Overview: Conditions: 150 mM KOAc, 10 mM MgCl2 and 150 mM bicine (pH 8.5), 24 C. Structure probing data (DMS and 2A3) for a 177-nucleotide construct. For DMS the reverse transcriptase was MarathonRT. Source: RMDB library TTRDES, as collected in RNAgym.

RNA sequence: GGGAACGACUCGAGUAGAGUCGAAAAAAGAUAUGGAAAUCACAAGAUGAGCCGCGUGAGAGGUGAGCUCGGAAACGAGCUCACUACCCACCUCACGAACUACGGUUGAGUGAUUUCCUAAGUCAAACAAUUACUACCUCUUCGGAGGUAGUAAUUGAAAAGAAACAACAACAACAAC
Reactivity to DMS in 0.01 (KOAc 150mM, MgCl2 10mM, bicine 150mM(pH8.5), 24C), signal-to-noise 3, nucleotides 027 to 126: a110a080g000a010u000a060u000g000g000a010a000a000u000c000a000c000a100a260g010a180u030g010a100g020c010c020g040c000g010u000g020a010g000a110g000g000u000g010a010g010c000u010c000g040g000a000a000a040c000g010a040g000c000u000c010a000c010u000a020c030c030c130a300c040c000u000c000a010c000g010a030a010c130u000a300c010g010g030u000u000g010a300g000u000g000a010u000u000u010c000c010u000a000a060g020u000c010a130a070a090
Reactivity to 2A3 in 0.01 (KOAc 150mM, MgCl2 10mM, bicine 150mM(pH8.5), 24C), signal-to-noise 1, nucleotides 027 to 126: a010a030g040a010u050a030u060g020g000a000a000a000u010c010a000c030a010a130g110a300u300g110a020g050c000c010g050c000g000u010g010a010g000a020g030g000u020g020a000g000c010u000c020g000g000a020a010a000c010g000a000g000c000u000c000a000c000u010a000c010c020c000a010c000c000u000c010a000c010g000a020a020c130u300a070c100g030g000u030u060g030a050g060u020g010a000u020u000u000c010c000u000a000a000g000u010c020a090a050a040